[RMDB]
RNA sequence: GGGAACGACUCGAGUAGAGUCGAAAAUCAUUGUUAUGCGGGAUCGGCGCGGCACCGUUGUCGGCCAACAGCUGACUCAUCUGGGUGCCGACCGACUGCCAGCCCAGGUUUUGCAGAUACAACUCCACGUAGCCUGCCAUUUCGAUGGCAGGCUACGAAAAGAAACAACAACAACAAC
Reactivity to 2A3 in 0.01 (KOAc 150mM, MgCl2 10mM, bicine 150mM(pH8.5), 24C), signal-to-noise 1, nucleotides 027 to 126: u180c010a080u050u080g080u070u150a040u220g020c000g010g000g010a090u110c020g010g000c160g050c000g300g000c000a000c000c070g050u020u070g000u000c010g020g030c000c030a050a000c020a110g000c000u000g000a010c000u000c110a180u030c080u300g110g000g000u010g000c010c010g000a000c000c000g020a060c000u030g020c000c000a050g030c050c010c000a050g010g110u000u010u020u170g000c000a000g000a010u000a120c030a000a080c020u020c000c020a040